[RMDB]
RNA sequence: GGGAACGACUCGAGUAGAGUCGAAAAUGAGAAGUCGUCAGUAGUUCGACGUGACCAGAAGCCCGCCUCGAUAUGCUAUGUGGACGAGGGCAUGCCCAAGACACACCUUAACCCUAGCGGGACGCAACUCCUGGACUAUAUUCGUAUAGUCCAGGAGAAAAGAAACAACAACAACAAC
Reactivity to 2A3 in 0.01 (KOAc 150mM, MgCl2 10mM, bicine 150mM(pH8.5), 24C), signal-to-noise 3, nucleotides 027 to 126: u180g030a040g030a140a020g110u030c020g010u020c040a060g120u160a010g050u170u090c050g010a020c070g080u040g040a050c000c060a030g050a160a020g050c000c010c010g000c030c010u030c000g060a060u020a010u230g060c110u090a050u130g080u080g100g040a140c030g010a060g000g000g030c040a040u150g070c010c000c000a010a000g050a010c030a000c000a050c030c050u050u070a060a080c000c010c020u010a000g050c040g000g010g020a010c050g020c020a020a080
Reactivity to DMS in 0.01 (KOAc 150mM, MgCl2 10mM, bicine 150mM(pH8.5), 24C), signal-to-noise 3, nucleotides 027 to 126: u010g000a120g020a120a120g000u000c020g010u000c070a110g000u010a100g000u000u010c050g030a050c050g020u000g000a140c070c090a130g000a130a170g020c000c020c020g000c020c020u010c040g010a080u000a120u010g010c070u000a040u000g000u000g010g000a070c110g020a260g000g000g010c030a070u010g010c010c020c020a070a190g020a090c040a030c100a060c110c040u000u000a070a100c030c010c020u000a070g020c040g000g000g010a070c040g010c100a070a120
Annotation: Chemical mapping of a 177-nucleotide RNA with 2A3 and DMS. The RNA was probed in 150 mM KOAc, 10 mM MgCl2 and 150 mM bicine (pH 8.5) at 24 C. The DMS profile rests on 2,263 reads. The 2A3 profile rests on 2,296 reads.